Annotation: Source: RMDB library OK3TST, as collected in RNAgym. The record gives the reactivity of an RNA of 207 nucleotides to 2A3 and DMS. Values are in units of 0.01, from 0 to 300, in steps of 10. The reactions ran in a buffer of 150 mM KOAc, 10 mM MgCl2 and 150 mM bicine (pH 8.5), at 24 C. For DMS the reverse transcriptase was MarathonRT. Reactivities are given for positions 27 through 156. The 2A3 profile rests on 4,007 reads.

RNA sequence: GGGAACGACUCGAGUAGAGUCGAAAAAGCGCGGCUUGAACGAGAGCUCUCGUAAGACUAUGACUCACUUCUUACGAGAGUCUUUCAAGCCGAACUGAGUGUAAGAGGUAAGAAGUGAGUCAUAGUCUUACCUCUGCUCUCACUCAGUUCGAACGCAACCUAGCAUAUUAUUCGUAAUAUGCUAGGUAAAAGAAACAACAACAACAAC
Reactivity to 2A3 in 0.01 (KOAc 150mM, MgCl2 10mM, bicine 150mM(pH8.5), 24C), signal-to-noise 3, nucleotides 027 to 156: a000g040c040g000c010g000g000c040u080u130g020a050a030c080g010a000g000a010g020c010u000c010u020c050g010u000a010a000g010a020c010u030a000u030g010a010c000u000c010a010c010u020u020c010u000u050a030c040g030a060g050a010g170u010c000u000u040u020c000a010a010g030c000c010g010a020a010c020u050g030a020g120u070g020u060a040a030g020a050g110g010u010a000a000g010a000a010g010u010g000a000g020u000c000a000u000a010g020u000c000u000u000a000c000c000u000c010u050g000c000u000c000u000c000a020c020u040c000a010g020u110u190c020g020a050a000c030g000c000a010
Reactivity to DMS in 0.01 (KOAc 150mM, MgCl2 10mM, bicine 150mM(pH8.5), 24C), signal-to-noise 2, nucleotides 027 to 156: a060g000c050g020c020g000g020c050u000u000g010a040a050c060g010a100g000a060g030c010u000c010u000c020g000u000a010a020g010a090c030u000a020u000g000a060c010u000c000a030c040u000u010c010u000u000a020c010g020a140g010a130g020u000c020u010u010u000c050a060a080g000c020c050g010a020a210c050u010g010a090g030u000g000u000a090a060g010a100g020g020u000a010a010g000a030a070g020u010g010a050g010u000c030a050u000a040g020u000c010u000u000a010c000c010u010c000u000g000c040u000c080u010c020a060c020u000c020a040g010u000u010c040g010a050a060c030g000c020a140